This 207-nucleotide RNA was probed chemically with 2A3. The RNA was probed in 150 mM KOAc, 10 mM MgCl2 and 150 mM bicine (pH 8.5) at 24 C. The data come from the RNA Mapping Database (RMDB), library VIROID. 2A3 adducts were read by reverse transcription with SuperScript II with manganese. The 2A3 profile rests on 482 reads.

RNA sequence: GGGAACGACUCGAGUAGAGUCGAAAAUUAUGCUCGGCGCUCAAGAGUUGUAUCGACCGGGUAGUUUCCAACUCCGGCUUGUGUUAAGAAGGAGCCGUUCCACGCAGGACGCGAACAAGAAGAACACGAAGCAACUUCAGGUCGCCGCGCACGAACUGAGAAAAAAUUAGUUCGCUAAUUUUUUCUCAAAAGAAACAACAACAACAAC
Reactivity to 2A3 in 0.01 (KOAc 150mM, MgCl2 10mM, bicine 150mM(pH8.5), 24C), signal-to-noise 1, nucleotides 027 to 156: u090u010a020u090g000c000u010c010g010g030c000g000c000u020c120a130a070g000a000g070u000u050g030u010a170u110c110g070a150c060c020g000g000g000u050a040g010u000u080u100c040c030a050a000c000u020c020c000g010g000c060u040u080g000u000g030u070u090a070a100g020a110a070g190g040a060g030c070c010g010u030u030c070c020a240c230g090c190a120g010g060a010c000g010c060g080a160a020c060a000a130g100a070a000g080a120a000c020a000c040g070a010a000g060c000a000a000c000u140u120c020a050g170g000u030c010g000c000c010g000c000g000c020a010c050g010a100a060c060u060